An RNA of 177 nucleotides, treated with DMS and read out base by base. Values cover nucleotides 27 to 126. In probing experiments dimethyl sulfate is read out at A N1 and C N3, which are open when not base-paired. The reactions ran in a buffer of 150 mM KOAc, 10 mM MgCl2 and 150 mM bicine (pH 8.5), at 24 C.
[RMDB]
RNA sequence: GGGAACGACUCGAGUAGAGUCGAAAAGAUAUGGAGUGCGCGAAACGGCAGCCCUUACUCAGAGACGUUGGUCGGAAACGACCAAACGUCGACGAAGAGUAAGGGCUGCCGGAGCACUCCUAAGUCAGCUAUGAACAUAGUUCGCUAUGUUCAUAGCAAAAGAAACAACAACAACAAC
Reactivity to DMS in 0.01 (KOAc 150mM, MgCl2 10mM, bicine 150mM(pH8.5), 24C), signal-to-noise 2, nucleotides 027 to 126: g000a070u020a300u020g000g020a020g030u000g000c000g000c150g000a100a120a230c000g010g000c000a020g000c000c020c000u000u000a010c000u000c000a060g000a150g020a020c000g020u000u000g000g000u000c020g000g000a100a060a250c000g010a020c000c000a010a000a050c010g020u000c000g000a130c300g000a100a140g000a050g010u000a010a000g010g000g000c010u000g020c000c020g000g020a040g040c000a000c000u000c000c000u000a010a060g000u000c080a080